[RMDB]
RNA sequence: GGGAACGACUCGAGUAGAGUCGAAAAAUCUGGACUAUCAGACGGUGCUUAACUUUUUACCUACACACUACUCAGGCAACAUAGUUCAUAGAUAUAAUGAUCAAUAUGGACAACAUUCCUUUAUGGCCCCUCCUUUCCGGUUCGCCGGAAAGGAGGGAAAAGAAACAACAACAACAAC
Reactivity to 2A3 in 0.01 (KOAc 150mM, MgCl2 10mM, bicine 150mM(pH8.5), 24C), signal-to-noise 2, nucleotides 027 to 126: a000u010c000u150g080g060a030c070u020a010u160c080a070g100a050c080g040g090u020g010c070u080u030a140a130c090u000u030u060u060u160a120c010c000u040a110c000a000c000a000c000u110a000c000u030c040a000g060g000c000a000a000c000a170u170a000g000u000u000c000a000u010a000g040a000u020a000u020a110a170u100g080a040u090c160a180a060u000a020u130g000g060a000c000a010a000c000a120u010u030c000c000u040u030u000a180u130g150g040c000
Chemical mapping of a 177-nucleotide RNA with 2A3. Reactivities are given for positions 27 through 126. The reactions ran in a buffer of 150 mM KOAc, 10 mM MgCl2 and 150 mM bicine (pH 8.5), at 24 C.